The data come from the RNA Mapping Database (RMDB), library TTRDES.
This 177-nucleotide RNA was probed chemically with DMS and 2A3.
For 2A3, 3,227 sequencing reads were counted.
For DMS, 1,682 sequencing reads were counted.
DMS (dimethyl sulfate) methylates the pairing face of unpaired adenines and cytosines.
Values cover nucleotides 27 to 126.
RNA sequence: GGGAACGACUCGAGUAGAGUCGAAAAGAUAUGGACCCUAGCUCGAUAAGCUGGUAUCGGAAACGAUACCCAGCUUUUGACGAGCAAUGGGUCCUAAGUCAAAUCCCCGGACUUCGGUCCGGGGAAAGGUAGUCCUAAUGUUCGCAUUAGGACUACCAAAAGAAACAACAACAACAAC
Reactivity to DMS in 0.01 (KOAc 150mM, MgCl2 10mM, bicine 150mM(pH8.5), 24C), signal-to-noise 2, nucleotides 027 to 126: g000a010u000a250u000g000g000a000c000c000c000u000a300g000c000u000c000g020a160u000a000a030g020c000u020g000g010u000a000u000c000g000g010a070a070a070c000g000a050u000a000c240c070c040a020g000c000u000u000u010u010g040a250c120g010a020g010c010a300a060u000g000g000g000u000c000c000u000a000a080g010u000c000a070a120a240u000c000c000c000c000g010g010a010c000u000u020c230g050g000u000c020c000g010g000g010g020a000a000a050
Reactivity to 2A3 in 0.01 (KOAc 150mM, MgCl2 10mM, bicine 150mM(pH8.5), 24C), signal-to-noise 1, nucleotides 027 to 126: g000a020u030a030u090g000g000a010c010c000c010u000a020g000c000u010c020g140a220u050a300a010g010c010u020g000g000u000a000u000c000g050g000a050a050a010c000g000a000u000a000c020c040c010a000g010c000u020u020u010u170g170a030c000g010a010g010c060a010a020u020g000g000g010u000c000c000u000a000a000g000u010c000a000a010a140u030c020c000c000c010g020g000a000c000u080u150c300g130g000u020c010c000g010g030g000g000a060a000a000
Conditions: 150 mM KOAc, 10 mM MgCl2 and 150 mM bicine (pH 8.5), 24 C.